[RMDB]
RNA sequence: GGGAACGACUCGAGUAGAGUCGAAAAGACUGGCAGGCAGUGCAUAUGCUUUUUUUUUUUUAGCAUAUGCGCCGGUACCGUUCAAGCCAGAGUACCUCUACCAUAGCCUGCGAAGGUAGAAAAUAGAGGGAAGCCUUUAGUUCGCUGGAGGCUUCCCAAAAGAAACAACAACAACAAC
Reactivity to DMS in 0.01 (KOAc 150mM, MgCl2 10mM, bicine 150mM(pH8.5), 24C), signal-to-noise 5, nucleotides 027 to 126: g000a090c020u010g010g030c000a080g000g020c040a180g000u000g000c000a000u000a000u000g000c010u010u000u000u000u000u000u000u050u070u030u050u000a010g010c000a010u000a000u000g000c000g020c000c040g010g020u020a070c070c070g000u020u010c140a080a100g000c010c010a050g000a110g020u020a080c060c020u010c060u000a040c030c030a100u010a170g020c010c030u000g010c030g020a080a090g000g010u010a020g000a070a070a090a090u040a060g000a300
Reactivity to 2A3 in 0.01 (KOAc 150mM, MgCl2 10mM, bicine 150mM(pH8.5), 24C), signal-to-noise 6, nucleotides 027 to 126: g110a020c020u020g010g010c000a020g030g000c010a000g000u000g010c000a000u000a000u000g010c000u020u050u050u030u010u000u010u010u000u020u040u070a000g000c000a000u000a000u000g000c000g000c000c000g020g010u040a080c020c040g030u050u130c090a090a030g030c010c010a010g010a000g020u030a030c000c010u010c030u010a030c010c030a070u060a050g040c000c010u030g020c030g020a030a010g010g000u040a020g080a040a090a020a020u180a030g100a090

The record gives the reactivity of an RNA of 177 nucleotides to DMS and 2A3.
For DMS, 18,946 sequencing reads were counted.
For 2A3, 13,369 sequencing reads were counted.
The RNA was probed in 150 mM KOAc, 10 mM MgCl2 and 150 mM bicine (pH 8.5) at 24 C.